Background
Chemical mapping of a 207-nucleotide RNA with 2A3 and DMS. The RNA was probed in 150 mM KOAc, 10 mM MgCl2 and 150 mM bicine (pH 8.5) at 24 C. 2A3 adducts were read by reverse transcription with SuperScript II with manganese. Values cover nucleotides 27 to 156. For DMS, 2,478 sequencing reads were counted. For 2A3, 5,183 sequencing reads were counted.

RNA sequence: GGGAACGACUCGAGUAGAGUCGAAAAAGACGGAAACCCAUCGACUGUCACCAUAUGCUGCAUCACCUGAUCACUGAUGGCUCAACGGUAUCCGGCGGUACAACUGAAUACUUGUAGCUGCCUUUUGAAAAGGAGUUCAUCUUCGGAUGAACUCCAACCAAACAUGCUAGUUCGCUAGCAUGUUUGGAAAAGAAACAACAACAACAAC
Reactivity to 2A3 in 0.01 (KOAc 150mM, MgCl2 10mM, bicine 150mM(pH8.5), 24C), signal-to-noise 6, nucleotides 027 to 156: a010g050a020c060g040g040a070a070a040c020c000c010a070u090c050g090a080c060u060g020u070c020a030c040c010a040u020a040u190g040c030u030g000c010a020u010c010a050c020c020u050g020a070u060c030a010c050u030g030a020u050g060g000c020u030c040a050a080c050g010g040u050a070u050c050c040g020g000c020g040g000u030a030c010a040a010c060u150g070a140a060u090a210c030u030u030g020u040a040g080c010u020g000c000c000u110u140u060u100g080a070a050a020a030g000g000a000g010u000u000c000a000u010c000u040u090c170g100g000a000u000g000a000a000c000u000c000c000a000a000
Reactivity to DMS in 0.01 (KOAc 150mM, MgCl2 10mM, bicine 150mM(pH8.5), 24C), signal-to-noise 1, nucleotides 027 to 156: a090g010a120c020g020g000a080a060a130c110c000c000a100u000c030g030a110c030u000g030u000c020a110c030c040a110u000a080u000g000c010u000g040c050a080u020c040a100c050c010u000g000a070u010c040a130c060u010g000a100u000g010g000c000u000c040a080a070c010g020g070u000a030u000c040c030g000g030c000g040g000u020a030c080a110a090c060u000g000a030a030u010a060c040u000u000g050u010a100g000c000u000g030c030c110u010u000u010u000g000a070a050a110a220g020g020a040g000u000u000c020a020u000c000u000u010c300g000g030a000u010g000a000a010c020u000c000c000a020a070